[RMDB]
This 177-nucleotide RNA was probed chemically with 2A3 and DMS. The RNA was probed in 150 mM KOAc, 10 mM MgCl2 and 150 mM bicine (pH 8.5) at 24 C. 2A3 adducts were read by reverse transcription with SuperScript II with manganese. For DMS, 4,934 sequencing reads were counted.

RNA sequence: GGGAACGACUCGAGUAGAGUCGAAAAGAUAUGGAAAUCUUUAGGCUUGGACCCUGUUGGUCGGAAACGACCACAGGCUAGCCUAUUGAUUUCCUAAGUCAAAGCCAGCAUCUUCGGAUGCUGGCAAUCAGUAUACUCUGUUCGCAGAGUAUACUGAAAAAGAAACAACAACAACAAC
Reactivity to 2A3 in 0.01 (KOAc 150mM, MgCl2 10mM, bicine 150mM(pH8.5), 24C), signal-to-noise 2, nucleotides 027 to 126: g010a020u080a050u170g000g010a000a000a000u000c000u020u020u010a010g000g000c000u140u300g130g100a210c000c000c040u060g050u300u290g070g000u010c010g000g030a070a060a030c000g000a000c000c000a000c000a000g000g000c010u000a010g010c000c000u000a010u000u000g010a000u000u010u020c000c000u000a030a000g010u010c050a110a100a000g030c000c000a010g010c010a000u020c020u110u150c300g160g000a000u000g010c020u010g010g010c010a010a010
Reactivity to DMS in 0.01 (KOAc 150mM, MgCl2 10mM, bicine 150mM(pH8.5), 24C), signal-to-noise 4, nucleotides 027 to 126: g000a030u000a300u010g010g000a010a010a000u010c000u000u000u000a010g010g000c000u000u000g040g010a120c300c020c000u000g000u010u020g020g020u000c000g000g000a070a090a190c020g000a010c000c010a000c000a000g000g000c020u000a000g010c000c000u000a000u000u000g000a010u000u000u000c000c000u010a020a080g010u000c020a160a130a190g010c010c000a000g010c000a020u000c010u010u020c290g020g010a020u000g000c000u000g010g010c010a000a000